[RMDB]
RNA sequence: GGGAACGACUCGAGUAGAGUCGAAAAGGACUUAUAUGCAGCUCUGGGUUGUGGAGGUAAGCUGUCUGUGGGGUGGUGCCAUGUCUCAGACCUCUCUGCAUAGCUAGGUGUGGAUCUUCUCAGAGAGACUAUCUCGAGAUUUCGAUCUCGAGAUAGUAAAAGAAACAACAACAACAAC
Reactivity to 2A3 in 0.01 (KOAc 150mM, MgCl2 10mM, bicine 150mM(pH8.5), 24C), signal-to-noise 2, nucleotides 027 to 126: g040g010a000c050u180u090a030u010a000u300g070c040a040g000c020u010c020u060g050g020g000u040u050g060u090g080g040a030g010g060u060a010a020g000c030u010g030u070c030u020g060u080g040g030g000g000u020g010g020u070g060c070c020a050u080g060u040c030u000c060a020g030a040c000c000u000c030u000c040u050g030c000a040u020a060g010c040u030a010g000g030u080g050u060g100g020a070u000c010u050u030c020u010c000a000g040a010g010a010g000
Reactivity to DMS in 0.01 (KOAc 150mM, MgCl2 10mM, bicine 150mM(pH8.5), 24C), signal-to-noise 4, nucleotides 027 to 126: g000g000a070c080u010u000a100u010a080u010g000c070a090g000c100u000c030u000g010g000g010u000u000g010u000g010g000a080g000g020u010a080a070g000c040u000g000u010c070u000g030u010g000g000g000g020u010g000g020u000g020c060c060a090u000g000u010c030u000c060a120g000a090c120c010u000c040u000c020u010g010c110a050u000a060g010c110u000a050g000g000u000g020u010g010g020a080u010c070u000u000c020u010c020a100g010a100g010a110g010